[RMDB]
RNA sequence: GGGAACGACUCGAGUAGAGUCGAAAAACGCGGAGUACGCUGCGCGACAACACUUCUUUCGACCCGCUAACCGAGACCUAUGGGUCGUUAAAUUACGUCUCUAUCUUACUCACAUAACAUCGCACAAAAAACGUGGUUCGGUUCGCCGAACCACGAAGAAUGUACUAAUGUUCGCAUUAGUACAUUCAAAAGAAACAACAACAACAAC
Reactivity to DMS in 0.01 (KOAc 150mM, MgCl2 10mM, bicine 150mM(pH8.5), 24C), signal-to-noise 3, nucleotides 027 to 156: a060c050g000c040g010g020a160g020u010a090c070g030c000u020g010c040g020c000g020a120c050a060a130c090a060c040u000u010c070u000u010u000c010g020a020c000c000c020g000c130u000a100a100c060c060g010a080g020a070c030c020u000a100u010g010g040g030u000c000g040u010u010a010a060a140u010u000a060c040g020u000c050u000c010u010a100u000c080u000u010a100c040u000c030a070c030a070u000a060a100c070a110u000c030g020c050a120c060a010a030a060a040a050a160c010g040u010g010g020u010u000c000g020g010u000u010c300g010c030c000g020a010a010c010c010a000c010g020a020a060
Reactivity to 2A3 in 0.01 (KOAc 150mM, MgCl2 10mM, bicine 150mM(pH8.5), 24C), signal-to-noise 9, nucleotides 027 to 156: a000c020g010c020g040g050a020g030u070a030c120g020c080u070g060c010g010c000g070a030c050a190a040c060a040c080u130u100c030u090u240u150c010g000a000c000c010c010g020c200u190a020a010c030c020g010a010g010a030c000c000u040a080u240g000g000g000u000c000g050u010u020a010a020a020u130u050a010c020g010u010c010u000c010u020a100u090c040u060u120a100c040u080c070a060c020a130u170a150a040c030a140u160c100g010c140a040c090a070a060a010a040a050a030c030g000u000g000g000u000u000c000g000g020u020u030c120g020c050c000g000a000a000c000c000a000c000g000a000a000